Annotation: An RNA of 207 nucleotides, treated with DMS and 2A3 and read out base by base. Conditions: 150 mM KOAc, 10 mM MgCl2 and 150 mM bicine (pH 8.5), 24 C. Source: RMDB library OK3TST, as collected in RNAgym.

[RMDB]
RNA sequence: GGGAACGACUCGAGUAGAGUCGAAAAAUGCAGCUACAAGAGGAGUUUGUGUUGGAGGUCUGUGUAGAUAGGAUGCUAAGCAGGUCUGUGUCAGCCAGGAUCGUUUGGGCAGUAAGUGACAGAAACCCAACUUGCGUUAACCACAAAGCCUCAAAGAGUCACUCCUCAUAUUCGUAUGAGGAGUGACAAAAGAAACAACAACAACAAC
Reactivity to DMS in 0.01 (KOAc 150mM, MgCl2 10mM, bicine 150mM(pH8.5), 24C), signal-to-noise 2, nucleotides 027 to 156: a100u010g020c030a110g050c070u000a040c040a090a180g020a140g020g010a160g040u000u010u010g000u000g010u010u020g010g020a090g030g000u020c010u020g030u030g030u000a050g030a140u010a130g000g020a100u000g000c030u000a020a090g050c080a090g000g010u000c030u000g010u000g000u020c050a100g000c000c020a070g020g040a110u020c070g030u000u000u000g010g000g040c090a080g020u010a050a080g030u000g030a120c040a070g010a090a110a120c050c000c000a050a070c040u000u000g000c030g000u000u000a100a140c020c030a050c070a040a080a100g050c040c000u010c040a060a080a090g000a270
Reactivity to 2A3 in 0.01 (KOAc 150mM, MgCl2 10mM, bicine 150mM(pH8.5), 24C), signal-to-noise 2, nucleotides 027 to 156: a000u090g010c020a010g000c010u030a030c030a070a030g010a050g090g010a080g040u070u060u100g060u040g020u020u080g010g050a050g010g010u000c020u040g020u030g060u050a020g010a040u060a040g090g070a050u080g010c050u060a090a050g030c040a020g030g050u020c030u010g060u050g020u100c030a040g000c050c010a060g020g020a080u100c030g070u060u120u050g020g050g000c020a000g030u120a110a040g020u060g070a040c000a020g040a070a040a010c020c000c000a020a020c020u000u050g010c010g060u060u030a060a050c010c020a030c030a040a130a090g060c000c040u090c000a050a090a010g070a000